[RMDB]
RNA sequence: GGGAACGACUCGAGUAGAGUCGAAAAAGCAACAGACGGUCGAUUCAAGGCAUCCUCGGUCCUUCUGGCAAUUGCGUGGGUCUUUGCAUGCGCCAUGUUUAUUGUUUAUUCGUUUGUUUACAAGUUGGACAGACGAGGAAGAUGGGUGGGGAUGGUACAGUGCGUCACUAUUCGUAGUGACGCACUGAAAAGAAACAACAACAACAAC
Reactivity to 2A3 in 0.01 (KOAc 150mM, MgCl2 10mM, bicine 150mM(pH8.5), 24C), signal-to-noise 1, nucleotides 027 to 156: a000g050c070a010a060c000a000g080a040c000g070g000u050c010g070a170u090u070c060a040a060g030g000c030a030u050c010c010u000c010g030g070u060c000c000u000u040c010u040g000g060c010a000a020u000u000g000c000g010u070g020g060g000u050c050u120u150u100g130c030a120u090g000c030g070c000c000a030u000g040u080u150u000a060u010u100g070u020u080u100a090u040u010c020g000u000u010u020g050u000u070u020a070c100a150a030g080u120u000g010g010a020c000a000g040a040c000g000a030g020g040a000a070g030a030u050g090g000g020u090g000g000g000g000a010u020g020g090u030a000
The data come from the RNA Mapping Database (RMDB), library OK3TST. Structure probing data (2A3) for a 207-nucleotide construct. The reactions ran in a buffer of 150 mM KOAc, 10 mM MgCl2 and 150 mM bicine (pH 8.5), at 24 C. 2A3 is a SHAPE reagent: it acylates the 2'-hydroxyl of flexible nucleotides of all four kinds. For 2A3, 590 sequencing reads were counted.